[RMDB]
RNA sequence: GGGAACGACUCGAGUAGAGUCGAAAAGAUAUGACCGCUUACUUGGCCCAGGAGCGCGACUUCGUGCCCUGGUAUGUGGCCUCCAAUAAGCUGAGGUCGCUCCAUCGCAGUCUCAUGUUCAGCGAGGGACCGAGCAGCAUUUCGAUGCUGCUCGGUCAAAAGAAACAACAACAACAAC
Reactivity to DMS in 0.01 (KOAc 150mM, MgCl2 10mM, bicine 150mM(pH8.5), 24C), signal-to-noise 1, nucleotides 027 to 126: g000a170u070a050u000g030a120c140c000g000c020u000u050a090c260u060u000g000g000c300c000c120a070g010g000a070g030c020g000c000g010a160c300u030u000c000g040u000g020c000c000c000u000g050g020u030a000u020g030u020g000g000c000c000u000c000c070a060a150u030a130a000g000c100u070g030a000g000g000u000c010g000c080u030c070c000a030u080c030g140c050a000g020u000c010u030c050a000u020g000u070u020c000a090g000c070g000a050g000g000
Reactivity to 2A3 in 0.01 (KOAc 150mM, MgCl2 10mM, bicine 150mM(pH8.5), 24C), signal-to-noise 3, nucleotides 027 to 126: g020a060u160a080u220g030a030c000c000g010c030u050u050a090c000u050u070g000g010c000c000c010a030g000g030a220g000c000g000c000g100a270c130u180u250c070g000u010g000c000c000c000u020g000g000u040a050u140g070u010g020g010c000c000u000c000c000a090a110u130a120a040g010c130u050g050a020g000g040u000c000g010c020u000c000c000a120u110c040g000c040a000g030u030c040u010c040a080u040g080u120u080c040a000g010c050g040a080g000g020
Source information:
The data come from the RNA Mapping Database (RMDB), library OK1LIB. Structure probing data (DMS and 2A3) for a 177-nucleotide construct. The 2A3 profile rests on 1,692 reads. The RNA was probed in 150 mM KOAc, 10 mM MgCl2 and 150 mM bicine (pH 8.5) at 24 C.